[RMDB]
Conditions: 150 mM KOAc, 10 mM MgCl2 and 150 mM bicine (pH 8.5), 24 C.
An RNA of 177 nucleotides, treated with DMS and 2A3 and read out base by base.
2A3 adducts were read by reverse transcription with SuperScript II with manganese.
Reactivities are given for positions 27 through 126.
RNA sequence: GGGAACGACUCGAGUAGAGUCGAAAAGAUAUGGAACCAUUCACGGAGAUGGAUAUCGGAAACGAUAUCCCAUCGCGAAACGUGAUGGUUCCUAAGUCAAAGGAUCACGACUUCGGUCGUGAUCCAACUUUAGGGUAUCGUUCGCGAUACCCUAAAGAAAAGAAACAACAACAACAAC
Reactivity to DMS in 0.01 (KOAc 150mM, MgCl2 10mM, bicine 150mM(pH8.5), 24C), signal-to-noise 3, nucleotides 027 to 126: g010a020u000a000u010g000g000a010a000c000c000a010u000u010c010a000c000g010g000a020g010a010u000g000g000a020u000a000u000c000g010g010a010a010a010c000g020a000u000a000u000c190c080c030a000u000c010g030c300g010a100a010a030c000g040u010g000a020u000g000g010u000u010c000c000u000a000a070g000u000c000a100a140a130g000g010a010u000c000a010c000g000a010c000u000u000c270g040g010u000c000g010u000g010a000u000c000c010a010a020
Reactivity to 2A3 in 0.01 (KOAc 150mM, MgCl2 10mM, bicine 150mM(pH8.5), 24C), signal-to-noise 3, nucleotides 027 to 126: g010a010u010a000u030g000g010a000a000c010c020a030u210u300c060a000c010g010g010a090g000a040u010g000g020a000u010a010u010c000g000g000a010a000a000c010g000a000u000a010u030c090c140c020a010u010c010g000c080g210a230a120a000c000g010u000g010a010u000g000g000u000u000c000c000u000a000a000g000u000c030a070a040a170g020g000a010u010c000a000c010g010a010c040u070u190c300g120g000u000c000g000u020g000a000u010c000c000a000a000

High DMS reactivity at an A or C suggests that its Watson-Crick edge is free.